Chemical mapping of a 177-nucleotide RNA with DMS and 2A3. It was measured as part of the RMDB library VIROID. 2A3 adducts were read by reverse transcription with SuperScript II with manganese.
[RMDB]
RNA sequence: GGGAACGACUCGAGUAGAGUCGAAAAGGACGGGAAAAGCACAUCCAGAGGACCCCUUCGACGAACAGAAGGAUCUGGUACCGGGGAGGAAUAGCCCAUAGUACAAGGGGAGAUGCUAGGAGUCAGGGAUACAAUUAUAGUUCGCUAUAAUUGUAUCAAAAGAAACAACAACAACAAC
Reactivity to DMS in 0.01 (KOAc 150mM, MgCl2 10mM, bicine 150mM(pH8.5), 24C), signal-to-noise 7, nucleotides 027 to 126: g020g000a100c090g010g000g000a050a050a100a100g010c100a070c130a110u010c010c010a050g000a070g010g000a160c220c150c010c010u000u000c010g010a100c120g010a080a050c140a080g010a040a040g000g010a090u000c030u000g000g010u000a080c100c070g010g000g000g010a070g000g000a070a080u000a100g000c010c010c030a060u010a060g010u010a060c130a080a060g010g000g000g000a070g000a070u000g020c060u000a070g000g000a090g000u000c070a110g000g000
Reactivity to 2A3 in 0.01 (KOAc 150mM, MgCl2 10mM, bicine 150mM(pH8.5), 24C), signal-to-noise 5, nucleotides 027 to 126: g020g020a030c020g000g000g050a020a150a030a040g030c030a030c010a110u030c010c010a010g010a030g050g070a070c050c020c010c000u020u020c020g100a110c050g100a260a050c030a100g010a020a010g010g020a060u000c030u040g030g000u040a070c020c040g000g020g020g020a060g000g060a070a050u060a100g030c000c010c010a020u080a020g090u080a050c060a100a040g010g000g020g010a050g010a020u070g010c020u040a020g020g060a020g050u070c060a040g080g090